Structure probing data (DMS and 2A3) for a 177-nucleotide construct. Reactivities are rounded to 0.1 and cut off at 0 and 3. For DMS, 4,228 sequencing reads were counted. DMS adducts were read by reverse transcription with MarathonRT. It was measured as part of the RMDB library OK2TST. Reactivities are given for positions 27 through 126.
[RMDB]
RNA sequence: GGGAACGACUCGAGUAGAGUCGAAAAACUUCAUCAAUAUUUUAUGUUUGAUGUGACAGUCAAAAUAUCCCUCAGAGCUAACUGUUACACUAGGGAAAUCACGGUUUUCCAGUUUUCCAUUUAUGUGCAGAGAAAGAUCAUUCGUGAUCUUUCUCUGAAAAGAAACAACAACAACAAC
Reactivity to DMS in 0.01 (KOAc 150mM, MgCl2 10mM, bicine 150mM(pH8.5), 24C), signal-to-noise 4, nucleotides 027 to 126: a050c050u010u010c020a010u000c010a020a030u010a060u010u020u030u010a080u040g000u000u000u000g010a020u000g010u000g010a060c120a040g000u000c080a080a060a100a120u010a120u000c020c000c000u000c110a080g000a090g010c090u000a050a020c050u000g010u000u000a070c040a030c060u010a080g000g000g000a010a010a020u000c060a090c220g020g000u000u000u000u000c010c020a120g010u000u000u010u000c020c020a120u010u000u000a060u020g010u000g020
Reactivity to 2A3 in 0.01 (KOAc 150mM, MgCl2 10mM, bicine 150mM(pH8.5), 24C), signal-to-noise 4, nucleotides 027 to 126: a020c040u160u080c010a010u000c000a010a050u030a150u200u270u200u210a150u280g070u030u050u040g010a020u010g040u070g080a070c080a000g060u080c030a030a000a130a180u110a080u070c020c010c010u030c040a040g020a020g090c030u060a040a040c030u020g020u120u080a020c030a000c030u070a040g000g000g070a020a020a010u080c100a060c160g080g060u030u020u130u100c020c000a010g010u000u000u050u020c020c000a030u080u200u060a150u260g070u040g020